An RNA of 170 nucleotides, treated with 2A3 and DMS and read out base by base. High DMS reactivity at an A or C suggests that its Watson-Crick edge is free. For DMS the reverse transcriptase was MarathonRT. The RNA was probed in 150 mM KOAc, 10 mM MgCl2 and 150 mM bicine (pH 8.5) at 24 C. It was measured as part of the RMDB library 15KLIB. High 2A3 reactivity points to a flexible backbone, as in loops and unpaired stretches.
RNA sequence: GGGAACGACUCGAGUAGAGUCGAAAAGGUGAAUCGUCCCGGAAUGGGGACUCCGAGGGCCCCUUCCGAAGUGACGGGGGGGGGUCACUAGGAACACUGGGGUCCAGUGGAUCCGUGGGACUACCCUGAAUCGGCAACUUCGGUUGCCGAAAAAGAAACAACAACAACAAC
Reactivity to 2A3 in 0.01 (KOAc 150mM, MgCl2 10mM, bicine 150mM(pH8.5), 24C), signal-to-noise 3, nucleotides 027 to 129: g100g000u120g050a090a060u130c050g010u030c010c010c060g010g100a140a060u230g000g000g010g010a040c060u010c020c030g070a160g020g070g000c000c000c000c000u000u000c000c000g040a170a030g050u070g040a010c010g010g020g000g000g000g020g000g000g000u010c010a010c040u030a030g000g030a010a010c040a040c010u010g000g000g000g110u050c000c000a000g040u070g060g030a100u010c010c000g000u100g000g000g000a000c000u130a250c000c000c000u010g060a060a090
Reactivity to DMS in 0.01 (KOAc 150mM, MgCl2 10mM, bicine 150mM(pH8.5), 24C), signal-to-noise 3, nucleotides 027 to 129: g030g030u060g050a080a070u030c110g020u020c000c000c000g000g000a100a070u050g020g020g010g000a010c010u020c050c060g010a110g020g030g000c000c000c000c000u030u000c010c000g010a020a040g010u030g030a040c020g040g010g040g040g040g020g000g020g010u020c000a030c000u050a230g020g020a030a070c100a030c080u050g000g000g000g070u110c040c000a000g050u050g010g020a000u000c000c040g030u070g020g020g000a010c010u040a140c080c000c000u040g080a070a150